[RMDB]
RNA sequence: GGGAACGACUCGAGUAGAGUCGAAAAAGAAAAUGGGCUCAAAAAGGAGGGAUUACUAAGACUUAGGCAGUACAUGUUCAUUCAACAAGGAGAUUCUGGUACUACAGAAGCUAAAUUCCCUUAAGAAUACUGAUACCAGUUUCGACUGGUAUCAGUAAAAAGAAACAACAACAACAAC
Reactivity to DMS in 0.01 (KOAc 150mM, MgCl2 10mM, bicine 150mM(pH8.5), 24C), signal-to-noise 5, nucleotides 027 to 126: a080g010a050a030a050a070u020g000g000g000c060u010c090a050a040a080a110a070g000g010a060g010g010g010a080u010u030a040c110u010a080a050g010a080c050u000u000a060g010g030c060a030g020u010a030c080a040u000g010u000u000c110a100u020u010c080a060a080c190a060a080g000g000a070g010a060u020u000c040u000g010g010u020a040c140u030a070c030a000g000a050a010g030c020u030a040a060a080u020u000c010c000c010u010u010a090a110g010a090a120
Reactivity to 2A3 in 0.01 (KOAc 150mM, MgCl2 10mM, bicine 150mM(pH8.5), 24C), signal-to-noise 4, nucleotides 027 to 126: a010g130a010a040a000a000u190g020g030g000c040u050c070a060a060a020a060a050g090g010a040g000g020g000a010u060u040a080c090u090a090a090g060a080c030u030u040a040g080g000c000a020g020u040a030c050a100u140g020u050u060c040a080u090u110c050a130a130c030a150a020g080g000a040g030a030u100u000c030u110g000g040u030a030c010u010a020c010a020g040a040a030g010c030u050a060a010a070u070u090c000c000c000u010u050a070a010g020a080a070
Chemical mapping of a 177-nucleotide RNA with DMS and 2A3. The reactions ran in a buffer of 150 mM KOAc, 10 mM MgCl2 and 150 mM bicine (pH 8.5), at 24 C. For DMS, 10,705 sequencing reads were counted.